[RMDB]
RNA sequence: GGGAACGACUCGAGUAGAGUCGAAAAGGCAGGACUUACCAAGUCUGGGGGCCGAUGAGGGUUGGCUCAAAGUAGGGUUUUGACUUGAAAACUCAAGCUGUGACCCCAACACGAUGGAGGUAAAUGAAAAAUCCAUCUGCCUUCGGGCAGAUGGAAAGUAGGACCAAAAGUUCGCUUUUGGUCCUACAAAAGAAACAACAACAACAAC
Reactivity to 2A3 in 0.01 (KOAc 150mM, MgCl2 10mM, bicine 150mM(pH8.5), 24C), signal-to-noise 1, nucleotides 027 to 156: g070g000c080a040g000g040a050c030u060u080a070c050c070a160a000g010u000c020u080g060g020g010g050g020c050c020g020a010u050g030a080g000g000g030u060u040g040g000c020u030c090a020a100a060g060u040a090g030g030g040u020u040u080u100g030a080c010u010u020g030a030a030a110a130c050u030c020a000a010g030c040u060g070u130g080a040c000c000c000c010a030a110c040a010c040g050a020u050g040g000a030g020g000u050a020a090a080u190g040a050a150a020a010a020u010c000c030a000u000c000u000g000c000c000u010u030c090g000g000g000c000a000g000a000u000g000g000a000a010a000